[RMDB]
Structure probing data (DMS and 2A3) for a 207-nucleotide construct.
For 2A3, 938 sequencing reads were counted.

RNA sequence: GGGAACGACUCGAGUAGAGUCGAAAAGCGAAGCAAUGUUUGCUGGUGUCGAUCCUGACCUCUGCUGGGACGAUAUCAAGUGGGUUAGAUCUCAAACCAAGUUGCCCUUGCUUGUUAAGGGAGUGCAGACUGUGGAGGUAUGUACACGCUGCGACUAGCUUACGGGAGUAUUCGUACUCCCGUAAGCAAAAGAAACAACAACAACAAC
Reactivity to DMS in 0.01 (KOAc 150mM, MgCl2 10mM, bicine 150mM(pH8.5), 24C), signal-to-noise 1, nucleotides 027 to 156: g030c010g010a090a050g050c040a070a080u010g020u010u010u000g020c040u000g010g040u000g030u010c000g020a120u010c010c020u020g010a000c000c050u000c090u020g110c040u000g050g060g030a080c020g000a070u000a150u020c060a000a140g020u000g020g000g000u000u000a170g000a190u000c020u010c030a010a070a110c050c030a060a290g060u000u000g020c000c000c020u000u000g040c080u010u000g050u000u000a060a120g000g000g020a130g010u000g010c060a100g000a040c110u020g090u010g010g000a070g000g000u000a050u000g000u170a080c040a150c070g180c040u000g000c020g020a230c020u010a210
Reactivity to 2A3 in 0.01 (KOAc 150mM, MgCl2 10mM, bicine 150mM(pH8.5), 24C), signal-to-noise 2, nucleotides 027 to 156: g120c040g050a050a020g030c050a070a060u100g050u050u060u140g100c030u000g000g000u000g000u010c040g040a230u040c010c020u020g090a050c000c070u030c030u100g100c050u060g030g040g030a020c010g000a020u010a020u130c040a090a100g030u080g020g000g030u070u040a090g000a140u080c050u040c000a040a060a070c010c000a020a020g050u030u050g070c000c000c000u000u030g000c020u100u040g080u110u050a010a020g000g000g000a000g020u020g000c000a000g030a060c060u130g010u060g060g000a090g100g000u040a090u170g040u070a040c080a010c060g030c000u040g000c000g000a020c030u090a010
The RNA was probed in 150 mM KOAc, 10 mM MgCl2 and 150 mM bicine (pH 8.5) at 24 C. Values cover nucleotides 27 to 156. It was measured as part of the RMDB library OK3TST.